RNA sequence: GGGAACGACUCGAGUAGAGUCGAAAAUCGCUAAGCUUCGGCUUAGCGAAAAGUCCCGGCUUGAGGGCGUGUACGGCUGCGCACACACACGACCCUCAAGCCAAAGCAUCGUGUUCGCACGAUGCAACCGUAGUUAUGGCUUCGGCCAUAACUACGGAAAAGAAACAACAACAACAAC
Reactivity to 2A3 in 0.01 (KOAc 150mM, MgCl2 10mM, bicine 150mM(pH8.5), 24C), signal-to-noise 1, nucleotides 027 to 126: u000c000g000c000u010a010a000g010c000u010u210c300g080g000c010u020u020a000g010c000g010a000a000a000a010g000u000c010c000c000g000g000c000u000u000g000a000g000g000g000c000g000u000g030u050a050c070g100g050c200u300g120c250g000c140a030c000a010c000a000c000a030c070g300a300c030c000c000u000c000a000a000g000c000c000a010a010a000g000c000a000u000c010g000u010g050u110u060c240g070c080a000c000g010a000u000g000c010a040a000

The data come from the RNA Mapping Database (RMDB), library M2PK50. Structure probing data (2A3) for a 177-nucleotide construct. The 2A3 profile rests on 1,510 reads.